An RNA of 177 nucleotides, treated with 2A3 and DMS and read out base by base. The reactions ran in a buffer of 150 mM KOAc, 10 mM MgCl2 and 150 mM bicine (pH 8.5), at 24 C. Reactivities are given for positions 27 through 126. For 2A3 the reverse transcriptase was SuperScript II with manganese.
[RMDB]
RNA sequence: GGGAACGACUCGAGUAGAGUCGAAAAGUCGUGGUCUCGCAACAAAUGGCUCGAUGUCGACACGUCCGACGGCAAGAACGAGGACUUGCAGCUCACCAAGACCGCGCACGUCAUCGCAUGGUGGUGCUCCCCUGCGUGAGUUCGCUCACGCAGGGGAAAAAGAAACAACAACAACAAC
Reactivity to 2A3 in 0.01 (KOAc 150mM, MgCl2 10mM, bicine 150mM(pH8.5), 24C), signal-to-noise 1, nucleotides 027 to 126: g070u030c030g060u030g070g000u110c050u060c050g070c040a140a080c050a050a180a110u220g020g000c010u030c070g220a040u080g040u050c050g000a050c040a030c150g040u060c040c000g000a090c000g010g020c030a000a120g010a220a000c010g030a030g000g100a090c060u010u060g020c010a000g000c010u030c050a070c040c060a000a020g060a030c010c010g000c010g010c010a020c070g070u130c010a050u130c030g040c150a080u150g030g020u000g000g000u100g140c000
Reactivity to DMS in 0.01 (KOAc 150mM, MgCl2 10mM, bicine 150mM(pH8.5), 24C), signal-to-noise 1, nucleotides 027 to 126: g060u000c050g030u010g000g000u000c000u010c100g050c110a220a140c040a050a020a230u010g010g000c040u000c040g070a100u000g000u000c010g000a110c140a010c090g010u000c060c060g000a160c020g000g000c030a090a050g010a060a230c020g000a260g000g000a060c060u000u000g010c130a060g020c000u000c070a020c130c060a040a030g000a100c010c050g000c090g070c080a110c070g000u000c050a140u000c000g000c140a060u000g000g050u000g030g040u010g010c000
Record summary: The data come from the RNA Mapping Database (RMDB), library OK2TRN. For DMS, 527 sequencing reads were counted.